Description: Structure probing data (DMS and 2A3) for a 177-nucleotide construct. DMS adducts were read by reverse transcription with MarathonRT. Source: RMDB library OK2TRN, as collected in RNAgym. Values cover nucleotides 27 to 126. For 2A3 the reverse transcriptase was SuperScript II with manganese. The 2A3 profile rests on 1,878 reads. The reactions ran in a buffer of 150 mM KOAc, 10 mM MgCl2 and 150 mM bicine (pH 8.5), at 24 C.

RNA sequence: GGGAACGACUCGAGUAGAGUCGAAAAGAAAAUAAUGUUCAAAUCACUUUGGACCUUCCAAAUAUCGAACGAGUUUCUCCAAGGUCGAAAGAAACACCAGUGUUCGUUCCACCACCACCUCCACCAAUCAUUAGUCCUGAUUCGUCAGGACUAAUGAAAAAGAAACAACAACAACAAC
Reactivity to DMS in 0.01 (KOAc 150mM, MgCl2 10mM, bicine 150mM(pH8.5), 24C), signal-to-noise 3, nucleotides 027 to 126: g010a100a070a080a060u000a090a120u010g000u000u000c040a050a080a070u000c130a090c160u000u000u010g010g000a060c070c110u010u030c030c030a040a080a080u010a050u010c110g010a040a060c080g020a120g000u010u000u000c020u000c030c050a080a070g010g010u000c050g000a030a050a040g000a050a030a060c050a040c100c060a040g010u000g000u000u000c060g000u000u000c030c000a070c040c020a030c030c030a140c020c010u010c030c040a110c080c070a040a120
Reactivity to 2A3 in 0.01 (KOAc 150mM, MgCl2 10mM, bicine 150mM(pH8.5), 24C), signal-to-noise 2, nucleotides 027 to 126: g060a020a140a010a050u160a060a090u160g030u010u040c010a040a030a140u100c040a050c100u020u020u030g050g010a050c040c030u090u020c050c000a050a080a020u200a040u070c050g020a020a020c030g010a050g100u010u040u010c050u000c020c000a070a040g000g060u060c030g080a040a120a120g070a020a110a010c040a040c010c050a060g030u020g060u120u050c030g000u050u010c000c010a030c000c010a020c000c010a000c000c000u000c010c020a070c010c000a010a060